[RMDB]
RNA sequence: GGGAACGACUCGAGUAGAGUCGAAAAGGGUUCAACCCCACCGUCACCGUCUUUCACGUGUACGACAUCCUGGAGAACGUGGAGCACGCGUACGGCAUGCGCGCGGCCCAGUUCCACGCGCGGUUUAUGGACGCCAUCACACCGACGGGGACCGUCACGAUCUGGAUUGAUUCGUCAAUCCAGAUCGAAAAGAAACAACAACAACAAC
Reactivity to 2A3 in 0.01 (KOAc 150mM, MgCl2 10mM, bicine 150mM(pH8.5), 24C), signal-to-noise 3, nucleotides 027 to 156: g070g010g010u130u280c120a090a140c000c000c010c000a020c040c000g000u010c070a030c010c020g020u010c000u020u180u170c060a040c070g020u060g050u150a050c040g070a050c090a160u190c020c110u140g030g030a040g020a080a010c020g060u040g010g000a060g020c040a030c030g030c060g010u080a020c030g060g040c110a050u160g000c020g000c000g000c010g010g040c010c040c020a020g050u130u010c020c020a040c000g030c000g000c050g030g010u130u080u090a070u060g060g030a080c100g090c110c010a060u060c030a030c010a020c020c040g010a000c020g000g000g020g010a050c060c020g030u060c050a010